RNA sequence: GGGAACGACUCGAGUAGAGUCGAAAAGGAGUAAGUACGGGAGGAACCGAAGGUUCGGGAGGGAGAUCCUCCUCAAGAACAUCCUGAGACCUUUCAAGGACAUAGACGAUCUCAUCCGCAACAUCUCUACAAGUUGAUAGUUCGCUAUCAACUUGUAAAAAGAAACAACAACAACAAC
Reactivity to DMS in 0.01 (KOAc 150mM, MgCl2 10mM, bicine 150mM(pH8.5), 24C), signal-to-noise 4, nucleotides 027 to 126: g010g000a080g020u010a060a100g030u000a080c110g010g000g010a040g010g020a070a120c060c050g010a120a100g000g000u000u000c020g000g000g000a050g000g040g030a140g000a140u010c010c020u000c020c000u000c160a050a090g000a040a040c060a060u010c030c010u000g000a090g010a150c060c040u010u000u010c080a090a070g000g010a060c090a080u010a050g010a070c120g000a060u000c030u000c030a080u010c010c040g000c080a060a070c120a080u000c050u000c070
Structure probing data (DMS) for a 177-nucleotide construct.